[RMDB]
RNA sequence: GGGAACGACUCGAGUAGAGUCGAAAAUAUGGCUUUGUACUUCUAUAUCCGGAAAGUUUUUGCGCAUUUCCCUGAUUUCCUCGGGAGAAAGGUAAGAAGUGUAAGGGCCUUUCGGAUUUUCCAGAUACCUAUGGUGACUCUUCGGAGUCACCAUAGGAAAAGAAACAACAACAACAAC
Reactivity to 2A3 in 0.01 (KOAc 150mM, MgCl2 10mM, bicine 150mM(pH8.5), 24C), signal-to-noise 3, nucleotides 027 to 126: u300a080u080g070g000c050u050u070u070g050u120a080c040u050u020c040u050a150u020a040u210c000c000g070g000a040a040a080g040u010u010u040u050u060g040c030g020c050a090u030u000u020c020c010c000u040g130a190u080u000u060c030c060u100c120g080g000g000a160g040a060a040a000g020g000u060a050a070g040a140a020g070u000g000u030a030a030g030g000g000c000c030u010u000u000c000g030g000a020u050u000u040u000c020c000a030g070a130u160a140
Reactivity to DMS in 0.01 (KOAc 150mM, MgCl2 10mM, bicine 150mM(pH8.5), 24C), signal-to-noise 1, nucleotides 027 to 126: u060a030u000g000g120c000u000u000u030g000u010a020c010u010u000c020u000a090u060a000u020c000c050g000g000a030a020a080g020u000u000u030u010u000g000c090g040c050a070u000u000u000c030c020c000u000g000a260u000u030u010c050c040u030c140g010g040g000a050g000a050a010a050g030g020u000a160a080g010a000a010g010u000g000u000a010a030g000g000g000c040c000u030u050u020c070g040g000a060u010u010u010u000c000c000a170g000a090u040a140
This 177-nucleotide RNA was probed chemically with 2A3 and DMS.
For DMS the reverse transcriptase was MarathonRT.
2A3 adducts were read by reverse transcription with SuperScript II with manganese.
For DMS, 1,493 sequencing reads were counted.